[RMDB]
RNA sequence: GGGAACGACUCGAGUAGAGUCGAAAAGGCGUCCGCUCCGGUGCAUGCGUUCUCGAAUGUGUGACGUGCUCAGUGUGCCGGCGCCACACGAUUUGGGAGGGUAUGGCAGUCGGCGUGUACAUGCAAGCUCCGGCGUCGUGUUCGCACGACGCCGGAGAAAAGAAACAACAACAACAAC
Reactivity to 2A3 in 0.01 (KOAc 150mM, MgCl2 10mM, bicine 150mM(pH8.5), 24C), signal-to-noise 1, nucleotides 027 to 126: g000g000c000g000u050c040c000g000c000u060c030c000g050g000u000g050c030a030u000g000c050g300u000u000c000u050c090g100a040a010u130g110u100g010u040g000a070c020g060u120g000c030u020c230a160g040u160g070u050g240c000c010g030g000c000g010c000c000a000c000a000c000g220a110u030u080u080g030g000g000a090g000g140g040u010a030u030g100g020c030a030g040u110c000g000g000c030g000u020g000u000a090c100a080u110g010c020a080a070g000